[RMDB]
RNA sequence: GGGAACGACUCGAGUAGAGUCGAAAAAAGCAAGUAAAGUGUGAAGUAGUUGUAUACUAAUUAGAAAGAUGAUAUAACCAACCUUACUAGAGCCAUAAUCUUUAAUCAGCCCUGAAAUCGUCUUGUUCGAAUCAUUUGUUUUUUAAAAGGAUUGAUAGCAGUAUCGAUUAUUCGUAAUCGAUACUGCAAAAGAAACAACAACAACAAC
Reactivity to 2A3 in 0.01 (KOAc 150mM, MgCl2 10mM, bicine 150mM(pH8.5), 24C), signal-to-noise 1, nucleotides 027 to 156: a000a000g100c170a130a020g000u210a230a120a020g050u080g010u060g080a070a000g020u080a000g000u070u050g000u200a080u040a120c070u100a100a220u160u030a060g110a110a130a000g090a060u050g030a010u100a010u020a100a000c030c030a000a030c020c000u000u000a010c000u080a090g010a000g100c000c000a020u130a220a100u100c060u100u190u030a080a080u060c030a000g010c050c000c000u050g090a030a030a050u130c020g020u000c060u090u110g020u080u060c000g080a030a090u020c010a080u020u010u120g020u000u040u000u000u000u050a130a110a030a050g020g040a090u140u060g060a020u200a030
Reactivity to DMS in 0.01 (KOAc 150mM, MgCl2 10mM, bicine 150mM(pH8.5), 24C), signal-to-noise 1, nucleotides 027 to 156: a060a180g020c030a070a100g010u010a060a010a040g030u000g010u010g010a040a080g020u000a090g000u010u030g010u010a060u000a190c070u000a090a080u020u000a130g030a140a100a120g010a130u000g010a050u000a060u010a070a070c040c020a100a070c030c000u010u000a040c030u000a100g030a080g030c050c020a070u010a040a100u000c060u000u000u010a040a140u010c090a060g010c010c030c020u000g000a050a060a030u000c030g010u000c020u010u000g010u000u030c020g010a120a060u010c020a140u010u000u000g000u000u000u000u000u000u030a040a030a100a140g010g030a090u020u030g010a080u010a100

An RNA of 207 nucleotides, treated with 2A3 and DMS and read out base by base. The DMS profile rests on 1,823 reads. High DMS reactivity at an A or C suggests that its Watson-Crick edge is free. The reactions ran in a buffer of 150 mM KOAc, 10 mM MgCl2 and 150 mM bicine (pH 8.5), at 24 C. Values cover nucleotides 27 to 156. The data come from the RNA Mapping Database (RMDB), library OK3TST. For 2A3 the reverse transcriptase was SuperScript II with manganese. For DMS the reverse transcriptase was MarathonRT.